Structure probing data (DMS and 2A3) for a 177-nucleotide construct. For DMS the reverse transcriptase was MarathonRT. The data come from the RNA Mapping Database (RMDB), library OK2TRN.
RNA sequence: GGGAACGACUCGAGUAGAGUCGAAAAUCGGGGCCUGCCUGAUGGCCGAGCCGGGAUUGGUCGCCGAUUGUAUCGCGGCCAUGCAGGAGGCGGUGUCCGUACCGGUGACGGUCAAGACCCGCAUCGGAUAGUAGGCUUGGUUCGCCAAGCCUACUAUAAAAGAAACAACAACAACAAC
Reactivity to DMS in 0.01 (KOAc 150mM, MgCl2 10mM, bicine 150mM(pH8.5), 24C), signal-to-noise 3, nucleotides 027 to 126: u010c030g010g020g010g010c050c020u010g010c000c010u000g000a100u010g010g030c020c060g000a300g000c080c020g000g000g010a110u010u000g010g020u010c030g020c060c020g000a090u000u020g010u000a300u010c060g000c000g020g000c010c020a040u010g010c070a070g000g000a150g000g000c000g000g010u000g020u010c010c040g040u010a190c000c000g010g000u010g000a160c000g010g000u000c040a110a110g000a130c300c000c000g010c060a020u010c030g000g010
Reactivity to 2A3 in 0.01 (KOAc 150mM, MgCl2 10mM, bicine 150mM(pH8.5), 24C), signal-to-noise 1, nucleotides 027 to 126: u060c000g000g050g020g000c080c020u040g110c060c010u060g070a030u040g010g000c050c020g000a020g040c000c030g030g010g000a110u090u160g070g020u100c030g040c160c050g030a010u050u120g080u230a060u050c040g000c020g060g000c020c030a010u060g110c010a020g030g030a020g040g000c040g020g030u110g050u010c000c020g020u000a010c000c000g000g040u020g060a140c010g000g000u050c050a000a050g080a050c020c020c000g000c000a060u050c030g020g040
In probing experiments dimethyl sulfate is read out at A N1 and C N3, which are open when not base-paired. The RNA was probed in 150 mM KOAc, 10 mM MgCl2 and 150 mM bicine (pH 8.5) at 24 C. 2A3 adducts were read by reverse transcription with SuperScript II with manganese. The DMS profile rests on 2,350 reads.